RNA sequence: GGGAACGACUCGAGUAGAGUCGAAAAGAAAGUGCGUGGAUCGGAUUGCGCAUUGGGAAGAGAUUAGUUCGGCACACGCACGCACUUUGAUCGUACUAUCUCUAAUCUGGACGCAGCAAAAUACUAACCGAUAUUUUAAGUUCGCUUAAAAUAUCGGAAAAGAAACAACAACAACAAC
Reactivity to 2A3 in 0.01 (KOAc 150mM, MgCl2 10mM, bicine 150mM(pH8.5), 24C), signal-to-noise 9, nucleotides 027 to 126: g120a020a110a000g010u010g000c010g000u010g010g050a090u080c040g030g020a060u040u140g060c110g020c090a060u100u150g080g030g030a080a060g050a030g010a090u100u160a060g020u020u050c010g030g000c030a010c000a000c040g010c000a000c010g010c000a050c020u070u070u120g080a110u100c030g020u050a040c010u020a030u010c010u000c010u040a090a300u100c030u040g030g010a030c030g000c030a050g020c040a070a060a040a080u170a110c060u080a070a040
Reactivity to DMS in 0.01 (KOAc 150mM, MgCl2 10mM, bicine 150mM(pH8.5), 24C), signal-to-noise 6, nucleotides 027 to 126: g000a080a040a130g020u000g000c030g030u000g000g010a100u030c100g010g030a150u020u010g010c060g010c060a130u020u020g000g010g000a140a050g000a060g010a060u030u030a010g020u000u000c010g010g010c300a070c100a030c090g000c010a000c000g000c110a050c040u000u020u010g010a110u040c070g000u030a040c020u000a030u010c000u000c020u000a080a130u020c050u010g000g010a100c020g020c080a070g000c120a070a050a050a060u020a100c160u030a070a300
Structure probing data (2A3 and DMS) for a 177-nucleotide construct. The DMS profile rests on 11,731 reads. The data come from the RNA Mapping Database (RMDB), library OK1LIB. The reactions ran in a buffer of 150 mM KOAc, 10 mM MgCl2 and 150 mM bicine (pH 8.5), at 24 C. Values cover nucleotides 27 to 126.